The data come from the RNA Mapping Database (RMDB), library OK2TST. This 177-nucleotide RNA was probed chemically with DMS. For DMS, 1,012 sequencing reads were counted. Reactivities are given for positions 27 through 126.
RNA sequence: GGGAACGACUCGAGUAGAGUCGAAAAGAGAAGGCUAAGUCCUGUCAAGGUUGUGCAUGAGUCACUUUAAAGGCUUAGAACCCUCUAGCACAUUGGUUGGAUAUGGAUUUUGACUUAUUUCAAGUAGGUCGUACACGACCUUCGGGUCGUGUACGACAAAAGAAACAACAACAACAAC
Reactivity to DMS in 0.01 (KOAc 150mM, MgCl2 10mM, bicine 150mM(pH8.5), 24C), signal-to-noise 1, nucleotides 027 to 126: g010a110g010a040a010g000g020c000u000a070a010g020u020c000c000u010g030u010c190a060a050g000g030u010u000g010u000g000c070a290u030g000a060g000u000c070a060c130u010u000u000a050a110a050g040g010c030u010u000a080g000a050a130c020c010c000u010c030u000a230g040c050a020c050a060u000u000g010g010u000u000g010g100a040u000a060u000g020g020a100u000u000u030u000g010a020c040u000u000a080u020u010u010c070a040a100g010u000a020g010